[RMDB]
RNA sequence: GGGAACGACUCGAGUAGAGUCGAAAAUUCUGAAAGAAGCUGCACGUUAAUAGGCAGGAAUGCGGUGCCGUCUGUUACCACCCCCUGUAGGGCAUUUGCUAGACCAACCGUGGUUUCUAUCAUUUGACCGUUGGUCAUUCGGGAGGGAUGUGAGUGGCGAAUCUAUGAGAUUCGUCUCAUAGAUUCGAAAAGAAACAACAACAACAAC
Reactivity to 2A3 in 0.01 (KOAc 150mM, MgCl2 10mM, bicine 150mM(pH8.5), 24C), signal-to-noise 3, nucleotides 027 to 156: u050u020c030u070g080a050a060a060g060a030a020g030c020u040g000c020a000c150g040u110u110a100a050u060a140g060g000c030a010g030g050a050a060u110g010c040g050g000u020g000c020c010g050u060c050u070g080u070u050a120c000c050a040c010c010c000c000c000u020g090u070a070g020g010g000c010a020u050u030u170g030c020u020a030g000a000c000c010a000a010c020c050g070u110g010g000u040u110u010c050u100a150u100c040a070u040u010u120g070a030c010c040g020u040u000g000g020u010c010a010u080u060c020g020g000g010a060g000g030g000a020u040g050u040g070a060g000u040g010g020
Reactivity to DMS in 0.01 (KOAc 150mM, MgCl2 10mM, bicine 150mM(pH8.5), 24C), signal-to-noise 3, nucleotides 027 to 156: u000u000c030u000g000a080a070a090g000a070a110g000c030u010g010c030a080c070g010u000u000a080a100u010a060g010g010c020a080g000g010a060a090u000g010c050g010g030u000g010c070c030g010u000c020u020g020u000u010a070c070c050a120c010c000c020c030c020u000g010u020a090g030g010g040c020a090u000u000u010g020c070u000a090g020a050c030c020a030a070c050c100g030u010g030g020u000u000u000c080u000a070u010c060a140u000u000u000g000a060c020c030g020u010u000g010g010u000c030a160u000u010c050g030g010g010a110g010g020g000a090u000g020u000g000a090g020u000g020g000